[RMDB]
RNA sequence: GGGAACGACUCGAGUAGAGUCGAAAAAGACAAUAUUAGUGGAUGAAAAAGAGUUUUUAAGGUUAUCUAAUGAUGAAAAUUUAAUAUGUGAAUCUCAGACGAUAGAAAGUAAUAAUUCUGUCGUCUUCAUAUAUUUUCCGUUCGCGGAAAAUAUAUGAAAAGAAACAACAACAACAAC
Reactivity to 2A3 in 0.01 (KOAc 150mM, MgCl2 10mM, bicine 150mM(pH8.5), 24C), signal-to-noise 2, nucleotides 027 to 126: a000g060a070c020a040a050u020a070u110u140a080g050u050g140g050a070u040g090a040a080a060a180a000g050a030g040u010u020u010u200u230a100a050g060g000u100u020a060u070c010u050a100a050u090g070a090u110g020a010a070a080a100u130u190u090a120a040u070a070u180g020u010g000a060a070u000c040u010c070a000g000a000c000g000a000u030a000g010a020a030a000g040u100a010a080u050a130a060u040u000c000u000g040u040c000g010u000c020u030u000